[RMDB]
This 177-nucleotide RNA was probed chemically with DMS and 2A3. It was measured as part of the RMDB library TTRDEL. Reactivities are given for positions 27 through 126. The reactions ran in a buffer of 150 mM KOAc, 10 mM MgCl2 and 150 mM bicine (pH 8.5), at 24 C.
RNA sequence: GGGAACGACUCGAGUAGAGUCGAAAAGAUAUGGAUACAGCAUCGAUCGUGCACUCGGAAACGAGUGUCACGGGAGCUGUGAUCCUAAGUCAAAACAAUAUCACGCUGUUCGCAGCGUGAUAUUGAAUCUUGACUUACUCUUCGGAGUAAGUCAAGAAAAAGAAACAACAACAACAAC
Reactivity to DMS in 0.01 (KOAc 150mM, MgCl2 10mM, bicine 150mM(pH8.5), 24C), signal-to-noise 3, nucleotides 027 to 126: g010a010u010a290u000g000g010a010u000a010c000a020g000c000a290u010c160g000a080u030c010g000u000g000c020a010c000u010c000g040g010a070a070a160c000g010a000g000u000g000u020c010a000c000g000g000g010a060g000c000u010g020u010g000a000u000c000c010u000a040a100g000u010c050a080a080a090a240c010a000a010u000a000u000c000a000c010g020c010u000g000u010u010c250g030c010a030g010c000g020u000g000a000u000a000u000u000g000a080a140
Reactivity to 2A3 in 0.01 (KOAc 150mM, MgCl2 10mM, bicine 150mM(pH8.5), 24C), signal-to-noise 2, nucleotides 027 to 126: g010a040u070a030u120g010g010a010u000a010c000a020g000c000a300u200c080g230a140u120c000g020u010g030c000a000c000u010c000g030g000a040a060a050c030g010a000g000u020g020u070c010a000c000g000g040g000a020g000c000u000g030u080g040a040u020c010c000u000a090a010g040u000c060a020a010a030a170c000a030a000u000a000u010c000a000c000g000c000u030g040u130u070c300g000c180a000g000c000g000u010g020a010u010a010u010u000g030a000a000